[RMDB]
This 177-nucleotide RNA was probed chemically with DMS and 2A3.
RNA sequence: GGGAACGACUCGAGUAGAGUCGAAAAAUAUCGGUUGGCAACGAGAGAUCGUGGGUGUCACAACUCCCCACCCGAUCGAAGUGUUGCAUAAAGACACAUGUGGUCUGCCUGGUUCCGAAUGUCCUCCCACGGUCGGUGACUUCGGUCACCGACCGUGAAAAGAAACAACAACAACAAC
Reactivity to DMS in 0.01 (KOAc 150mM, MgCl2 10mM, bicine 150mM(pH8.5), 24C), signal-to-noise 1, nucleotides 027 to 126: a130u000a000u000c060g000g000u000u000g000g000c180a200a050c000g000a030g000a060g000a070u000c000g090u040g000g000g000u000g070u030c300a070c300a090a100c210u030c080c000c040c000a080c020c050c140g000a000u000c000g000a200a140g040u000g000u010u030g000c060a020u110a090a110a030g000a050c030a000c000a100u000g070u050g000g000u000c000u080g060c070c000u000g000g030u130u000c070c000g000a000a060u010g000u000c000c020u080c040c070
Reactivity to 2A3 in 0.01 (KOAc 150mM, MgCl2 10mM, bicine 150mM(pH8.5), 24C), signal-to-noise 2, nucleotides 027 to 126: a000u300a110u100c040g000g000u110u130g100g040c000a010a000c040g010a000g000a000g000a150u000c000g000u000g000g130g000u070g040u120c080a080c140a260a300c070u060c000c000c000c000a000c000c000c000g010a000u000c000g020a260a100g000u020g010u040u160g000c080a050u300a050a100a000g010a000c010a000c000a150u150g070u180g070g010u000c010u000g000c010c000u120g170g020u100u000c000c000g060a110a160u040g000u130c000c040u040c000c000